About this RNA:
Chemical mapping of a 177-nucleotide RNA with 2A3. The 2A3 profile rests on 281 reads.

[RMDB]
RNA sequence: GGGAACGACUCGAGUAGAGUCGAAAAUGGUAUUAUCCUUUACAGUGAAUGGGAAAUCCAAUACUGAAAGAGCCAUCAUUGAUUCAGCAAAUGAUGAACUAAUGAAUGCAAUGUAUUUACUAACAAAGGCGAACAUGAGAUUCGUCUCAUGUUCGCCAAAAGAAACAACAACAACAAC
Reactivity to 2A3 in 0.01 (KOAc 150mM, MgCl2 10mM, bicine 150mM(pH8.5), 24C), signal-to-noise 1, nucleotides 027 to 126: u000g000g000u000a110u300u000a060u170c000c000u000u000u070a040c020a020g000u050g140a250a190u210g000g000g000a120a120a120u010c150c000a250a300u300a150c040u130g000a000a000a000g130a000g000c000c000a000u060c000a000u040u040g190a020u000u000c020a020g090c080a000a000a060u230g190a130u130g000a000a000c000u040a050a050u060g000a090a000u080g000c020a000a000u000g110u110a000u020u040u150a170c090u220a160a110c000a130a060a000